[RMDB]
An RNA of 177 nucleotides, treated with DMS and 2A3 and read out base by base. For 2A3 the reverse transcriptase was SuperScript II with manganese.
RNA sequence: GGGAACGACUCGAGUAGAGUCGAAAAGAUAUGGACAGGUGAAUGGGCAUGGCGUUUGACGUCGGAAACGACCGAGCCAUGAACUACCCACACCUGUCCUAAGUCAAAAGACAGGUUCGCCUGUCAACUAAGGUAAACGCUUCGGCGUUUACCUUAGAAAAGAAACAACAACAACAAC
Reactivity to DMS in 0.01 (KOAc 150mM, MgCl2 10mM, bicine 150mM(pH8.5), 24C), signal-to-noise 2, nucleotides 027 to 126: g000a020u010a170u000g000g000a010c000a010g010g000u000g010a130a110u000g000g000g010c000a040u000g010g010c000g030u000u000u000g000a110c300g000u010c000g010g010a010a040a050c000g010a000c010c050g030a170g010c000c000a010u000g000a000a010c070u000a300c030c000c040a080c050a000c000c000u010g000u000c000c000u010a000a020g000u010c030a080a050a200a030g020a030c010a030g000g010u000u000c250g010c000c010u000g020u010c010a080a070
Reactivity to 2A3 in 0.01 (KOAc 150mM, MgCl2 10mM, bicine 150mM(pH8.5), 24C), signal-to-noise 1, nucleotides 027 to 126: g030a040u000a000u060g000g010a010c010a020g100g070u030g080a300a300u230g040g000g040c000a010u010g020g000c040g080u180u300u260g220a210c120g000u020c020g100g020a000a000a000c000g000a000c050c080g040a070g000c000c000a010u010g000a000a000c040u080a020c050c030c000a000c000a020c020c010u000g020u020c000c000u000a020a000g000u000c000a010a080a000a040g000a020c000a000g010g100u180u190c190g170c120c000u020g000u030c010a000a000